Source: RMDB library RFMREP, as collected in RNAgym. An RNA of 177 nucleotides, treated with DMS and 2A3 and read out base by base. DMS adducts were read by reverse transcription with MarathonRT. For 2A3, 881 sequencing reads were counted.
RNA sequence: GGGAACGACUCGAGUAGAGUCGAAAACGGAAUGCAGAAAACAUCUUAGAAAAAAAGUAGUUUGAAUUCCUGAAUGAUUUUUCCUGUAGAAAGGGGCUUAGGAUAAUGAUUUCAGCUUUAUUGAGGGGAUAGGUUAAGUGUUCGCACUUAACCUAUCAAAAGAAACAACAACAACAAC
Reactivity to DMS in 0.01 (KOAc 150mM, MgCl2 10mM, bicine 150mM(pH8.5), 24C), signal-to-noise 1, nucleotides 027 to 126: c160g020g000a040a050u000g010c040a090g000a210a080a070a080c020a060u000c030u000u000a200g010a040a000a120a100a110a040a040g020u000a130g020u000u000u010g000a100a090u000u010c070c000u000g000a010a020u000g000a110u000u010u010u000u000c000c010u000g000u000a020g020a020a090a150g000g000g010g010c000u000u010a010g000g010a010u000a010a020u000g000a130u000u000u000c030a010g000c090u000u000u000a090u010u000g000a080g020g020g000
Reactivity to 2A3 in 0.01 (KOAc 150mM, MgCl2 10mM, bicine 150mM(pH8.5), 24C), signal-to-noise 1, nucleotides 027 to 126: c030g010g050a050a000u080g000c070a040g170a080a160a000a070c030a050u060c000u070u130a110g110a110a230a000a060a000a020a000g040u100a050g020u000u030u050g040a050a050u040u000c000c000u000g000a000a020u020g000a000u030u000u020u050u010c000c010u080g020u090a050g050a110a100a050g040g000g040g000c000u030u070a000g020g000a020u010a040a020u080g000a000u000u000u010c010a010g040c010u120u200u080a140u160u120g080a100g000g070g070